[RMDB]
RNA sequence: GGGAACGACUCGAGUAGAGUCGAAAAUCAUCAAGAAGUAGGCUUAGGCCAAUUGCUUGGUGGUGAAAGUAGAGGGAAGGUAGCGCUUCGACGCCUCUAAGUACGCUGUGGGAGUAGUGCUUAAAUCAAAAGCACAGCGACUUCGGUCGCUGUGCAACGACAAUUCAGACUUCGGUCUGAAUUGUCGAAAAGAAACAACAACAACAAC
Reactivity to 2A3 in 0.01 (KOAc 150mM, MgCl2 10mM, bicine 150mM(pH8.5), 24C), signal-to-noise 2, nucleotides 027 to 156: u030c000a000u030c000a000a000g030a140a050g050u080a040g020g000c010u140u060a050g110g000c010c030a040a110u080u040g040c010u020u010g000g000u020g000g010u030g030a090a100a000g070u070a010g020a030g040g020g050a050a010g020g030u060a000g010c010g010c040u060u040c050g020a040c040g040c010c000u070c040u040a100a040g050u050a030c040g010c100u070g010u060g050g010g020a020g020u070a020g000u010g050c040u050u090a140a080a050u090c060a090a030a020a010g030c000a000c000a000g000c020g000a000c000u030u030c120g080g000u000c000g000c000u010g000u000g020c000a000a000
Record summary
An RNA of 207 nucleotides, treated with 2A3 and read out base by base. For 2A3, 1,573 sequencing reads were counted. Values cover nucleotides 27 to 156. The reactions ran in a buffer of 150 mM KOAc, 10 mM MgCl2 and 150 mM bicine (pH 8.5), at 24 C. The data come from the RNA Mapping Database (RMDB), library M2RFPK.